[RMDB]
Chemical mapping of a 207-nucleotide RNA with 2A3 and DMS. The RNA was probed in 150 mM KOAc, 10 mM MgCl2 and 150 mM bicine (pH 8.5) at 24 C. For 2A3, 3,570 sequencing reads were counted. DMS adducts were read by reverse transcription with MarathonRT. Values cover nucleotides 27 to 156.
RNA sequence: GGGAACGACUCGAGUAGAGUCGAAAAACUGCAUCUACGGAUGCAGAACUACGUUCAUCCAAUUUAUUUGGACGCAUGAAAUGAGAAUAGGGAACGGGAUUCUCAUACGCAGGCUACGGCCGGCGAAAAAACUCCUUAUGCUUCGGCAUAAGGAGAAUCUGAAAAGUAAGUUCGCUUACUUUUCAGAAAAAGAAACAACAACAACAAC
Reactivity to 2A3 in 0.01 (KOAc 150mM, MgCl2 10mM, bicine 150mM(pH8.5), 24C), signal-to-noise 2, nucleotides 027 to 156: a000c000u000g000c000a000u000c000u010a030c230g120g000a000u000g000c000a000g000a010a010c060u090a030c000g010u010u010c000a010u010c020c010a040a030u110u180u140a210u090u100u110g010g010a000c010g020c030a030u130g110a140a140a060u020g000a020g000a020a010u020a040g080g000g000a000a010c010g000g000g000a010u010u000c000u000c010a010u040a040c000g000c010a010g020g000c000u030a070c230g110g010c020c000g000g000c000g050a100a040a010a010a000a040c000u000c000c000u000u000a000u000g000c000u010u030c140g110g000c000a000u000a000a000g010g000a000g000a000a010
Reactivity to DMS in 0.01 (KOAc 150mM, MgCl2 10mM, bicine 150mM(pH8.5), 24C), signal-to-noise 2, nucleotides 027 to 156: a100c020u010g030c000a020u000c000u010a080c270g050g030a010u000g020c010a000g010a020a060c010u010a020c000g020u000u000c000a110u010c140c180a150a130u000u000u030a100u070u000u010g020g000a000c010g030c020a090u000g010a020a040a100u000g010a060g020a100a110u000a100g020g000g010a060a090c030g000g000g010a300u000u000c000u070c010a030u010a060c020g060c000a020g020g020c000u000a070c220g050g020c000c020g020g060c040g040a000a040a030a050a040a040c000u000c000c000u000u000a010u000g000c000u000u000c300g040g020c000a000u000a000a000g010g000a000g020a000a000